[RMDB]
RNA sequence: GGGAACGACUCGAGUAGAGUCGAAAAGGAUGAAGGAAGCGGAAUGCGAAAGCACCGGCGGAACCGUUUUUUUGGGUGAAAGUCGGCAAAAGGUCGACUCGUGAGCGCGCCCCUCACGCACCCGUCAGGGAUCGCCGGCCGCUAUAAGGGGCGCGAGCAUAUACAUAGAGUUCGCUCUAUGUAUAUGAAAAGAAACAACAACAACAAC
Reactivity to DMS in 0.01 (KOAc 150mM, MgCl2 10mM, bicine 150mM(pH8.5), 24C), signal-to-noise 1, nucleotides 027 to 156: g010g000a110u000g010a150a100g020g010a100a040g010c000g020g010a130a080u000g020c040g000a150a100a140g010c020a260c010c020g020g010c000g000g020a060a170c000c000g010u000u000u000u010u030u090u010g020g040g040u000g010a130a030a030g010u000c000g030g050c020a050a100a100a140g000g010u000c010g000a020c000u000c020g020u000g000a030g010c000g030c010g030c010c010c000c010u010c010a000c020g050c000a070c010c000c000g000u000c070a070g030g010g010a140u000c010g030c010c000g030g010c010c040g030c010u000a030u000a050a110g010g040g070g020c020g050c020g000a090g040
Reactivity to 2A3 in 0.01 (KOAc 150mM, MgCl2 10mM, bicine 150mM(pH8.5), 24C), signal-to-noise 2, nucleotides 027 to 156: g060g010a050u120g050a060a020g090g020a020a000g000c010g020g000a230a070u110g000c030g030a060a020a000g000c020a000c020c010g000g000c000g000g000a010a020c010c010g020u040u010u010u000u030u190u280g000g000g000u010g030a150a060a050g000u010c000g010g000c010a040a080a050a040g240g010u010c000g000a000c000u010c030g010u010g010a020g000c070g000c000g000c030c000c000c000u000c010a000c000g000c000a010c000c000c020g030u100c130a070g000g000g020a070u080c000g000c000c000g000g000c010c000g000c000u000a010u050a030a040g000g000g000g000c000g000c000g000a000g000